[RMDB]
RNA sequence: GGGAACGACUCGAGUAGAGUCGAAAAUGGACUGCGUUCGCGCAGUCCAAAAGAAUAGACGAACACUAGCGUAGAAGUGUUCAGGUCACAAAACUACGCAAAAAAGCUGAGUGUUCGCACUCAGCAACCAUCUCUUGGUGUUCGCACCAAGAGAUGGAAAAGAAACAACAACAACAAC
Reactivity to DMS in 0.01 (KOAc 150mM, MgCl2 10mM, bicine 150mM(pH8.5), 24C), signal-to-noise 1, nucleotides 027 to 126: u000g000g010a010c000u000g000c000g010u010u020c280g040c030g050c000a000g020u010c020c000a000a000a090a070g000a100a100u010a090g010a180c090g070a010a000c000a030c000u000a130g040c000g020u000a010g010a250a060g050u030g000u000u010c000a080g010g050u040c020a000c050a090a080a050a240c000u000a000c010g100c010a020a060a120a040a190a030g030c000u000g000a000g080u020g030u000u050c200g030c030a000c010u010c000a030g000c010a070a040
Reactivity to 2A3 in 0.01 (KOAc 150mM, MgCl2 10mM, bicine 150mM(pH8.5), 24C), signal-to-noise 1, nucleotides 027 to 126: u050g000g000a000c010u010g050c010g020u020u020c110g000c020g010c100a010g000u010c000c020a000a000a000a020g010a020a030u110a030g100a070c080g010a030a000c000a000c040u050a080g000c010g030u030a000g010a220a010g020u000g000u030u020c040a020g080g090u080c060a010c030a190a070a060a070c050u020a010c010g000c000a010a000a000a090a060a000g000c000u000g000a000g000u010g050u110u130c250g040c050a000c000u000c000a000g000c000a000a020
Overview:
Conditions: 150 mM KOAc, 10 mM MgCl2 and 150 mM bicine (pH 8.5), 24 C. Structure probing data (DMS and 2A3) for a 177-nucleotide construct. For DMS, 641 sequencing reads were counted. Source: RMDB library M2PK50, as collected in RNAgym. For 2A3, 2,067 sequencing reads were counted. For 2A3 the reverse transcriptase was SuperScript II with manganese.